[RMDB]
RNA sequence: GGGAACGACUCGAGUAGAGUCGAAAAAAUCGGGGAAGAUAAGCUAGCAGCAAAAAGGAACCGAUUCCCACCAAGUUCGGAAAGAGAUACCGGGCGAGGCGCUGAAGAAAGAAUCUCGCUUCAGACAGAAGGAAGUAGGUUUCGACCUACUUCCUUCAAAAGAAACAACAACAACAAC
Reactivity to 2A3 in 0.01 (KOAc 150mM, MgCl2 10mM, bicine 150mM(pH8.5), 24C), signal-to-noise 3, nucleotides 027 to 126: a000a000u000c000g000g000g040g030a000a090g060a160u080a160a040g050c020u080a040g060c160a010g000c050a060a070a000a090a070g210g010a020a020c000c010g000a000u010u010c060c000c000a000c000c020a020a070g010u000u000c010g020g100a170a140a030g260a090g010a080u090a110c000c000g010g030g030c030g000a000g020g010c090g000c060u020g000a000a010g030a040a230a030g070a100a140u070c070u050c100g010c000u020u020c000a030g000a100c030a050
Reactivity to DMS in 0.01 (KOAc 150mM, MgCl2 10mM, bicine 150mM(pH8.5), 24C), signal-to-noise 3, nucleotides 027 to 126: a030a010u000c010g040g000g010g020a190a190g000a040u010a070a100g000c040u000a120g000c200a230g000c050a010a050a060a110a040g010g000a300a270c010c010g000a000u000u010c010c030c000a210c130c100a020a170g000u000u010c040g010g000a130a070a060g020a030g010a120u000a080c080c000g000g000g010c030g000a160g000g020c300g000c090u000g010a080a030g010a080a060a040g020a090a080u030c050u000c060g000c050u000u000c020a030g030a100c270a120

Structure probing data (2A3 and DMS) for a 177-nucleotide construct. High 2A3 reactivity points to a flexible backbone, as in loops and unpaired stretches. Values cover nucleotides 27 to 126.